[RMDB]
RNA sequence: GGGAACGACUCGAGUAGAGUCGAAAAACGAGGUGUGUGUCAACGCCGAGACUGGCACCGUGUGGUGGCCGGAAUGCUCGAAAGAGGCCUACGCCGACGGGAUCGCGGGCGCGGUCGACGCGUACUGCUUUUGCUGGUGUUUCGACACCAGCAAAAGAAAAGAAACAACAACAACAAC
Reactivity to 2A3 in 0.01 (KOAc 150mM, MgCl2 10mM, bicine 150mM(pH8.5), 24C), signal-to-noise 4, nucleotides 027 to 126: a010c070g010a060g000g010u030g010u000g010u000g020u060c060a080a020c060g010c020c000g000a010g010a010c010u030g070g010c000a010c020c020g040u120g060u180g120g040u050g050g050c010c020g050g040a120a080u300g050c010u010c040g040a070a080a000g040a020g000g000c010c000u030a040c090g000c000c000g050a090c030g050g060g000a100u060c030g000c000g010g030g020c090g000c000g040g030u080c040g020a080c000g010c000g010u030a100c010u030g050
Reactivity to DMS in 0.01 (KOAc 150mM, MgCl2 10mM, bicine 150mM(pH8.5), 24C), signal-to-noise 3, nucleotides 027 to 126: a070c060g000a230g000g000u020g030u000g020u000g010u000c050a080a130c150g000c070c010g020a140g060a090c000u020g000g000c020a040c030c010g000u000g000u020g010g000u000g020g020c040c000g010g010a030a090u020g000c000u040c000g010a070a090a130g000a150g000g000c020c030u010a140c120g000c010c010g000a100c080g000g000g000a110u000c120g020c020g040g010g000c050g000c020g030g000u010c200g000a220c100g000c010g020u010a060c070u010g000
The data come from the RNA Mapping Database (RMDB), library OK1LIB. An RNA of 177 nucleotides, treated with 2A3 and DMS and read out base by base. For 2A3, 2,745 sequencing reads were counted. The RNA was probed in 150 mM KOAc, 10 mM MgCl2 and 150 mM bicine (pH 8.5) at 24 C. Reactivities are given for positions 27 through 126. For 2A3 the reverse transcriptase was SuperScript II with manganese.